[RMDB]
RNA sequence: GGGAACGACUCGAGUAGAGUCGAAAAUCCAGUACGUUCGCGUACUGGAAAAGUCGCGGCUUGAGGGCGUGUACGCCAGCGCACACACACGACCCUCAAGCCAAAGUCCGUACUUCGGUACGGACAACAAAGUAACGACGUUCGCGUCGUUACUUUGAAAAGAAACAACAACAACAAC
Reactivity to 2A3 in 0.01 (KOAc 150mM, MgCl2 10mM, bicine 150mM(pH8.5), 24C), signal-to-noise 3, nucleotides 027 to 126: u010c000c000a010g000u000a000c010g010u020u070c200g000c010g070u010a020c000u030g000g110a020a000a030a000g070u050c050g020c090g100g000c010u000u000g010a010g000g000g000c010g020u030g010u000a040c050g050c050c020a160g060c070g030c040a010c000a000c000a000c000a020c010g300a300c010c000c000u000c000a010a000g000c010c000a010a000a010g000u010c000c000g000u010a000c000u040u040c220g060g010u000a000c010g000g010a000c010a010a000
Reactivity to DMS in 0.01 (KOAc 150mM, MgCl2 10mM, bicine 150mM(pH8.5), 24C), signal-to-noise 3, nucleotides 027 to 126: u000c000c000a000g010u000a000c000g010u000u000c160g040c000g020u000a010c000u010g010g000a000a010a030a110g010u000c100g010c250g000g000c000u000u010g010a000g010g010g000c010g020u000g000u010a050c100g020c020c040a150g020c230g030c090a070c090a070c140a020c000a060c020g010a160c010c000c000u010c010a020a000g010c010c000a000a020a060g000u000c000c000g010u000a000c000u000u010c210g030g010u000a000c000g000g010a000c010a030a090